[RMDB]
Record summary:
This 177-nucleotide RNA was probed chemically with 2A3.
RNA sequence: GGGAACGACUCGAGUAGAGUCGAAAAAAACCAGUCUCAUAGAUAUGAAGGCUUUGUUUCUGAUGAAGGAUUGUGGGAUUGUUGCUUAACACUGAUGAGCAUAUUAUUGGUUCAAUUCUGGUGUUGAAUGAGGUUUUCUUUUCGAAGAAAACCUCAUAAAAGAAACAACAACAACAAC
Reactivity to 2A3 in 0.01 (KOAc 150mM, MgCl2 10mM, bicine 150mM(pH8.5), 24C), signal-to-noise 1, nucleotides 027 to 126: a000a000a000c080c000a000g000u000c000u000c000a070u060a050g230a010u260a000u260g050a030a010g000g000c040u040u000u040g000u000u000u000c000u110g140a140u040g050a180a100g010g010a040u010u150g000u000g120g160g000a080u010u030g010u070u140g000c000u050u000a000a000c040a000c010u180g000a070u050g000a000g000c000a040u010a010u060u060a110u110u060g040g000u180u100c050a100a080u000u010c000u030g030g030u070g040u000u000g050a000
Source information
The 2A3 profile rests on 282 reads. 2A3 adducts were read by reverse transcription with SuperScript II with manganese. The RNA was probed in 150 mM KOAc, 10 mM MgCl2 and 150 mM bicine (pH 8.5) at 24 C.